[RMDB]
Chemical mapping of a 207-nucleotide RNA with 2A3 and DMS. DMS adducts were read by reverse transcription with MarathonRT. Reactivities are given for positions 27 through 156. For 2A3, 704 sequencing reads were counted. Source: RMDB library OK3TST, as collected in RNAgym. Conditions: 150 mM KOAc, 10 mM MgCl2 and 150 mM bicine (pH 8.5), 24 C.
RNA sequence: GGGAACGACUCGAGUAGAGUCGAAAAUAAUGAUUAUGCCCAGCAGGUUCGUGUGCGUUUGGCUCAGGCUCUAGCGUGUGUAGCUGAGGGUGUCGGUGUGUCUGUUGAUCAGGUUGAAAUGGAUGCUACUAGUUUCUUCACUCGUGUGGGGCGUGCCACAUAUGACCCCGUUCGCGGGGUCAUAUGUAAAAGAAACAACAACAACAAC
Reactivity to 2A3 in 0.01 (KOAc 150mM, MgCl2 10mM, bicine 150mM(pH8.5), 24C), signal-to-noise 1, nucleotides 027 to 156: u140a030a050u110g100a130u120u070a030u270g040c000c010c000a020g000c040a010g000g010u090u090c020g020u070g050u020g080c070g000u000u100u070g080g020c000u000c070a060g070g050c000u030c060u080a010g060c060g000u050g000u000g050u070a040g000c040u010g080a030g000g010g020u090g020u050c080g050g070u050g010u040g020u040c000u010g050u040u020g050a070u070c010a040g020g000u070u030g030a050a070a110u100g020g010a010u060g040c020u040a160c030u050a030g030u070u030u000c000u110u110c030a050c060u060c030g030u100g010u070g070g010g010g000c060g000u020g030c020c020
Reactivity to DMS in 0.01 (KOAc 150mM, MgCl2 10mM, bicine 150mM(pH8.5), 24C), signal-to-noise 1, nucleotides 027 to 156: u010a120a110u010g020a230u000u000a080u000g010c000c010c010a240g040c070a140g030g010u010u000c060g000u010g040u000g010c050g010u010u000u000g010g000c010u010c060a120g020g020c020u000c040u000a120g010c030g050u010g040u000g080u020a050g030c030u000g010a080g010g030g040u000g020u000c060g030g000u010g020u000g000u000c040u010g030u000u010g000a100u010c050a110g000g030u000u000g020a070a110a080u010g020g020a120u000g010c020u000a050c050u000a100g010u000u000u000c040u020u000c070a060c040u000c040g010u020g020u020g000g000g020g000c030g000u000g000c020c070